[RMDB]
Chemical mapping of a 207-nucleotide RNA with 2A3.
Values cover nucleotides 27 to 156.

RNA sequence: GGGAACGACUCGAGUAGAGUCGAAAAUUGUCAUUCGUGACAAAGAGCUCCUAAGUCAGAUACUAUCUCCAUUGUCAGCUCGGAUCGGAAACGAUCCCGGAGCUUGGAUUUAUGGAGACGAAUAUCUGAUAUGGAAUAUACGCGAGUUCGCUCGCAACCUGGGUAAUACCUUCGGGUAUUACCCAGGAAAAGAAACAACAACAACAAC
Reactivity to 2A3 in 0.01 (KOAc 150mM, MgCl2 10mM, bicine 150mM(pH8.5), 24C), signal-to-noise 2, nucleotides 027 to 156: u100u020g000u000c000a020u080u070c230g170u020g000a010c000a010a050a000g100a060g030c060u000c000c000u040a100a000g010u020c000a010g000a010u000a030c050u010a060u030c000u020c000c000a010u020u060g010u010c000a000g000c000u010c000g000g000a010u010c000g050g090a190a030a010c000g000a000u000c000c020c170g110g040a000g000c030u020u080g010g000a000u000u300u260a000u030g000g000a010g000a000c000g060a130a120u000a000u030c010u010g000a000u000a010u030g020g020a030a040u140a090u090a190c100g000c000g000a010g000u090u100c250g050c120u010c010g000c000a020a020